[RMDB]
Chemical mapping of a 177-nucleotide RNA with 2A3. Reactivities are given for positions 27 through 126. Source: RMDB library OK1LIB, as collected in RNAgym. The reactions ran in a buffer of 150 mM KOAc, 10 mM MgCl2 and 150 mM bicine (pH 8.5), at 24 C.
RNA sequence: GGGAACGACUCGAGUAGAGUCGAAAAAUUCAGGAUAUUAUCGGAGGCGUGGACAUGGUGCUCCUGACCCACAAUCACAUCGACCAUUACGAGCCGAGUGUCCCCACACAUUUGCCCAAAGAAAUUCCGGCAGACCUACAUUCGUGUAGGUCUGCCGAAAAGAAACAACAACAACAAC
Reactivity to 2A3 in 0.01 (KOAc 150mM, MgCl2 10mM, bicine 150mM(pH8.5), 24C), signal-to-noise 1, nucleotides 027 to 126: a020u120u040c070a010g000g040a010u010a050u300u050a090u140c140g000g140a020g000g000c020g000u110g000g000a030c010a020u050g010g010u080g150c090u000c020c010u000g020a030c000c000c060a000c120a010a020u100c000a000c040a260u120c010g090a070c020c020a020u150u000a070c000g070a000g050c050c000g000a000g000u060g030u030c000c000c070c000a000c000a000c000a000u100u250u120g000c000c000c050a070a000a080g060a060a040a090u170u000c000